RNA sequence: GGGAACGACUCGAGUAGAGUCGAAAACGACACAACUUAGCGUGAUGUUUGCACACUCGCUAAGCAGAGGCAAACUACCGGAAAUUUAGAAGCUGCCCCACAUCACACCAAUUUUCAAAGGAGGUCGCACUGACGGGUCCUUCGGGACCCGUCAGUGAAAAGAAACAACAACAACAAC
Reactivity to 2A3 in 0.01 (KOAc 150mM, MgCl2 10mM, bicine 150mM(pH8.5), 24C), signal-to-noise 1, nucleotides 027 to 126: c070g120a010c000a010c000a290a000c000u000u000a010g010c000g100u010g050a210u080g300u010u300u280g120c300a000c000a000c020u010c020g000c000u000a000a000g000c000a000g030a080g090g000c040a100a000a060c030u020a020c030c020g040g100a030a150a000u170u110u110a300g060a270a000g000c020u060g000c040c000c010c000a060c000a040u090c030a000c000a110c040c030a000a070u010u090u180u260c040a080a050a050g120g040a000g040g000u080c030g000
This 177-nucleotide RNA was probed chemically with 2A3. Source: RMDB library OK1LIB, as collected in RNAgym. For 2A3 the reverse transcriptase was SuperScript II with manganese. The 2A3 profile rests on 329 reads.